[RMDB]
RNA sequence: GGGAACGACUCGAGUAGAGUCGAAAAAGCUUCAACGCCUUUUUUUCCUAUCUUCUUUAGCACCGGGCUAGGGAGUAAGCCCGUGGAACCUUAGUUUUGUUCCCUCGGGACUUACUUGUGGUUCCUGUGGUGCACUCCUGACCCUGCUGCUUUGAAAGUACUCUUACGAGUUCGCUCGUAAGAGUACAAAAGAAACAACAACAACAAC
Reactivity to 2A3 in 0.01 (KOAc 150mM, MgCl2 10mM, bicine 150mM(pH8.5), 24C), signal-to-noise 3, nucleotides 027 to 156: a010g010c040u180u150c130a110a040c110g050c030c020u060u040u090u030u000u050u090c020c010u090a230u160c110u150u030c000u050u160u060a000g000c000a000c030c030g000g000g060c070u070a060g070g040g010a000g000u070a050a030g020c000c000c000g050u060g010g010a000a000c000c010u030u020a010g020u060u200u130u150g060u120u060c010c000c040u080c120g060g000g000a010c000u000u000a000c000u030u070g090u110g090g000u000u030c000c030u040g140u250g030g030u090g000c020a010c000u000c000c000u070g040a090c000c010c000u010g000c020u000g010c000u050u040u080g090a070a050a020
This 207-nucleotide RNA was probed chemically with 2A3. 2A3 adducts were read by reverse transcription with SuperScript II with manganese. It was measured as part of the RMDB library VIROID.